RNA sequence: GGGAACGACUCGAGUAGAGUCGAAAAGACCACAUGGUCAAGGCUGGUUUAGUCGGUGUGCUCACACUAGACAACCAGGACCUUAAUGGCAAGUGGUAUGAUUUUGGUGACUUCGUAAUCACUCAACGAUAGUAUCCCUGUUCGCAGGGAUACUAUCAAAAGAAACAACAACAACAAC
Reactivity to 2A3 in 0.01 (KOAc 150mM, MgCl2 10mM, bicine 150mM(pH8.5), 24C), signal-to-noise 4, nucleotides 027 to 126: g070a010c020c000a010c010a040u230g030g000u000c010a000a010g010g000c000u010g030g020u050u040u100a050g010u010c010g030g000u020g010u030g080c080u140c120a010c010a000c000u050a110g000a010c010a000a000c010c000a010g000g020a020c000c000u050u080a170a090u120g000g000c010a020a040g010u000g010g000u030a080u090g180a130u030u140u100u150g030g010u010g010a020c010u060u030c150g070u110a040a040u010c010a010c020u140c050a020a090c090
Reactivity to DMS in 0.01 (KOAc 150mM, MgCl2 10mM, bicine 150mM(pH8.5), 24C), signal-to-noise 5, nucleotides 027 to 126: g000a030c000c000a030c020a060u010g020g010u000c010a040a030g020g010c010u000g000g000u000u000u010a080g010u000c010g010g010u000g030u000g030c300u020c280a070c010a020c000u000a060g010a010c000a080a010c010c000a000g000g000a110c000c010u000u000a090a110u010g000g020c010a040a040g030u000g000g020u000a040u010g010a150u000u000u000u000g000g000u000g000a040c080u000u000c220g010u020a110a190u010c020a020c020u010c250a060a070c250
The record gives the reactivity of an RNA of 177 nucleotides to 2A3 and DMS. The RNA was probed in 150 mM KOAc, 10 mM MgCl2 and 150 mM bicine (pH 8.5) at 24 C. DMS adducts were read by reverse transcription with MarathonRT. It was measured as part of the RMDB library 15KREP.